[RMDB]
RNA sequence: GGGAACGACUCGAGUAGAGUCGAAAAGAAAGAGAGUUAGACACGGUUGAUCUCACCCUUCGGGGGGGCUAUAGAGAUCACUGGAAGCACUACCGGACAACCGGAACAUUGCAGCAAUGCAGCACAAAAAAUCCAAACAUCUUCGGAUGUUUGGAAAGCAUGUUAUUCACUUCGGUGAAUAACAUGCAAAAGAAACAACAACAACAAC
Reactivity to 2A3 in 0.01 (KOAc 150mM, MgCl2 10mM, bicine 150mM(pH8.5), 24C), signal-to-noise 1, nucleotides 027 to 156: g060a000a080a000g090a000g020a010g000u050u100a080g040a070c030a010c060g050g040u090u220g000a010u000c020u040c000a060c000c010c010u100u060c120g060g000g000g000g000g020g000c010u070a090u080a250g000a000g000a000u000c000a000c040u000g010g030a020a000g050c040a000c060u070a020c020c000g000g000a050c030a190a170c030c030g020g040a020a020c040a050u060u180g000c030a030g000c020a040a030u050g010c010a000g000c020a000c060a050a080a010a000a000a010u030c000c000a000a000a000c000a000u000c000u060u040c100g130g000a000u000g000u000u000u000g030g000a010a010a010

This 207-nucleotide RNA was probed chemically with 2A3. Reactivities are given for positions 27 through 156. The 2A3 profile rests on 806 reads. Conditions: 150 mM KOAc, 10 mM MgCl2 and 150 mM bicine (pH 8.5), 24 C.